[RMDB]
RNA sequence: GGGAACGACUCGAGUAGAGUCGAAAAAGGAAUAAGGGCAGGUCACGUUGCUAUUGGUUAUCUAUACCAGUCUGCUUGGUUGCCCGGAGCUAUAAAAAAGUCUCCUUCAACGAAGCAUUCAUCUCCAACUUUCAUCCUCAUUCGUGAGGAUGAAAGUAAAAGAAACAACAACAACAAC
Reactivity to 2A3 in 0.01 (KOAc 150mM, MgCl2 10mM, bicine 150mM(pH8.5), 24C), signal-to-noise 5, nucleotides 027 to 126: a020g130g020a070a030u150a070a080g030g000g000c030a020g000g040u050c020a000c090g040u040u050g020c060u050a060u080u070g050g000u080u060a070u140c060u090a080u070a090c020c000a000g000u020c000u010g000c000u030u010g070g010u020u010g010c030c020c020g000g000a000g000c000u030a030u230a120a080a030a010a010a030g050u060c000u000c000c000u040u050c030a050a030c040g090a060a000g000c010a020u030u040c020a030u030c020u000c030c000a030
Reactivity to DMS in 0.01 (KOAc 150mM, MgCl2 10mM, bicine 150mM(pH8.5), 24C), signal-to-noise 3, nucleotides 027 to 126: a050g000g000a070a070u020a060a090g000g000g000c000a070g000g000u030c080a050c130g030u000u050g000c080u000a090u030u010g000g010u000u000a070u000c140u030a090u030a120c060c010a020g000u000c040u000g000c020u020u000g000g010u010u010g010c170c130c220g000g000a010g000c020u000a050u030a010a050a060a120a040a040g020u040c010u010c000c020u010u030c010a050a030c040g000a040a020g010c010a030u000u000c000a080u000c050u000c040c070a110
Structure probing data (2A3 and DMS) for a 177-nucleotide construct. High 2A3 reactivity points to a flexible backbone, as in loops and unpaired stretches.